Record summary
This 207-nucleotide RNA was probed chemically with 2A3.
[RMDB]
RNA sequence: GGGAACGACUCGAGUAGAGUCGAAAAGGGGUCAGUCCAACAGCCACCGCCCUAUACUACCCACCUUAUACUGAAGCCUCCACGGUAUAAGAGGUAUAGUAACAUGUGGACAUGGACUGACGGAGGCACCCAAAACUUAUCCGUUCGCGGAUAAGAACGUUGUGAUGAGAUUCGUCUCAUCACAACGAAAAGAAACAACAACAACAAC
Reactivity to 2A3 in 0.01 (KOAc 150mM, MgCl2 10mM, bicine 150mM(pH8.5), 24C), signal-to-noise 3, nucleotides 027 to 156: g060g020g040g010u000c000a010g000u000c030c010a070a060c070a160g120c010c020a030c050c140g070c030c010c020u020a040u020a020c060u100a080c030c040c060a060c030c000u000u000a000u000a010c010u020g060a130a010g010c000c000u000c020c000a020c010g010g000u010a000u000a000a000g010a020g000g000u020a050u020a060g130u090a070a140c170a300u300g010u030g000g020a080c020a080u040g000g000a000c000u000g000a020c000g010g000a000g000g020c000a020c000c000c000a000a070a020a090c000u000u000a000u000c010c000g040u030u070c290g010c020g110g000a000u000a000a000g020a050a010

Description: 2A3 adducts were read by reverse transcription with SuperScript II with manganese. The 2A3 profile rests on 2,740 reads.